[RMDB]
An RNA of 207 nucleotides, treated with 2A3 and read out base by base. As a SHAPE reagent, 2A3 marks flexible, mostly unpaired nucleotides at the ribose 2'-OH.
RNA sequence: GGGAACGACUCGAGUAGAGUCGAAAAACUGCCAUACGUGGCAGAAACACGCCUUACCAGGACUAAACAGCGUGUCUAAAAAACAGUCCUUCAUACCUGAUCUGGAGGGUAGAUCAGGGAUACUAAAAAAAUCGGGUGAAGUUCGCUUCACCCGAAAUCCACUAAUCUGCUUCGGCAGAUUAGUGGAAAAAGAAACAACAACAACAAC
Reactivity to 2A3 in 0.01 (KOAc 150mM, MgCl2 10mM, bicine 150mM(pH8.5), 24C), signal-to-noise 1, nucleotides 027 to 156: a000c020u000g020c000c000a070u060a110c260g080u020g000g000c010a000g010a020a020a000c010a010c000g010c020c000u030u090a050c040c040a000g000g010a000c000u080a070a120a000c020a010g010c000g020u020g020u050c130u050a000a000a000a000a000a000c030a000g000u000c040c010u000u080c050a080u050a140c000c000u000g000a000u000c030u060g070g020a090g070g080g020u020a020g010a000u000c000a000g000g000g000a020u090a120c120u270a060a000a000a040a000a030a140u080c010g000g000g000u000g000a000a000g040u040u120c230g020c090u000u000c000a000c000c000c000g000a000a000a000